[RMDB]
The record gives the reactivity of an RNA of 207 nucleotides to DMS and 2A3. For DMS, 3,997 sequencing reads were counted. For 2A3 the reverse transcriptase was SuperScript II with manganese. Conditions: 150 mM KOAc, 10 mM MgCl2 and 150 mM bicine (pH 8.5), 24 C. It was measured as part of the RMDB library M2RFPK.

RNA sequence: GGGAACGACUCGAGUAGAGUCGAAAAAGAGGCGAUACGUCGCCUCAAGCUUGGUGCAUAGCUUCUUUCACCAAGCAUAUUACACGCGGAUAACCGCCAAAGGAGAAACACUGACUACGGUCAGUGAGGAAGUUGGUUCGGUUCGCCGAACCAACAAUCUAUUUACAAACUUCGGUUUGUAAAUAGAAAAAGAAACAACAACAACAAC
Reactivity to DMS in 0.01 (KOAc 150mM, MgCl2 10mM, bicine 150mM(pH8.5), 24C), signal-to-noise 2, nucleotides 027 to 156: a090g000a020g020g010c020g050a070u000a050c270g010u000c010g070c000c000u000c010a010a050g000c020u000u000g020g040u010g010c220a100u010a160g030c080u010u000c050u000u000u000c000a060c000c000a030a030g010c010a050u000a040u010u000a100c040a080c070g020c000g020g020a180u000a110a140c000c000g010c000c050a030a060a140g040g000a100g010a230a110a200c000a020c000u010g000a030c000u000a090c300g150g000u000c010a020g000u010g000a040g000g000a040a120g020u000u000g000g000u010u030c000g020g010u000u000c280g010c010c000g000a020a010c000c020a000a000c000a030a070
Reactivity to 2A3 in 0.01 (KOAc 150mM, MgCl2 10mM, bicine 150mM(pH8.5), 24C), signal-to-noise 4, nucleotides 027 to 156: a000g010a000g000g000c010g010a000u040a060c190g110u000c000g000c000c000u000c000a000a000g000c000u000u000g000g000u030g020c090a130u060a120g060c030u080u060c010u020u090u020c000a000c010c000a000a000g010c010a000u070a020u060u170a030c090a010c060g010c010g020g030a070u070a300a240c010c010g010c030c030a070a100a040g080g010a030g040a040a100a020c010a000c000u000g010a000c010u030a010c180g060g000u000c000a000g000u020g000a010g020g030a090a100g000u020u000g000g010u000u000c000g010g010u010u040c170g010c040c000g000a000a000c000c010a000a000c000a000a010